Background:
Conditions: 150 mM KOAc, 10 mM MgCl2 and 150 mM bicine (pH 8.5), 24 C. An RNA of 177 nucleotides, treated with DMS and 2A3 and read out base by base. For DMS the reverse transcriptase was MarathonRT.

[RMDB]
RNA sequence: GGGAACGACUCGAGUAGAGUCGAAAACAUCGCGGACCCGAAGUAUAAAUCCGCAACCGAAGGCUUUAGCAAUCCGGAAGACGGCAAGGAGAAUCACGUUCUCGGCCGCGAUUGGAGCAAGCUACCGGGAGGUUCGGUAAUUCGUUACCGAACCUCCAAAAGAAACAACAACAACAAC
Reactivity to DMS in 0.01 (KOAc 150mM, MgCl2 10mM, bicine 150mM(pH8.5), 24C), signal-to-noise 1, nucleotides 027 to 126: c260a000u000c170g000c000g040g000a010c010c020c000g000a050a100g070u030a120u000a060a000a210u020c040c000g070c030a050a070c100c090g000a130a300g000g030c050u000u000u100a150g000c070a040a180u010c050c090g140g000a010a010g050a180c070g010g000c000a050a210g000g010a020g010a000a010u010c160a090c180g050u000u000c000u010c010g000g000c000c000g000c000g000a290u000u000g000g000a100g000c000a000a040g000c050u000a080c180c030g130
Reactivity to 2A3 in 0.01 (KOAc 150mM, MgCl2 10mM, bicine 150mM(pH8.5), 24C), signal-to-noise 2, nucleotides 027 to 126: c030a110u090c040g000c000g030g010a010c080c000c000g040a060a000g150u140a130u100a110a060a050u000c000c000g000c010a020a020c020c020g000a080a030g020g000c010u090u140u100a040g000c050a190a110u010c030c000g010g010a060a030g120a070c000g050g000c070a090a020g200g000a010g000a090a030u250c140a090c280g060u000u000c010u000c000g010g000c000c000g030c030g000a010u010u150g000g000a020g170c000a050a050g050c060u060a140c020c070g020
The data come from the RNA Mapping Database (RMDB), library OK1LIB.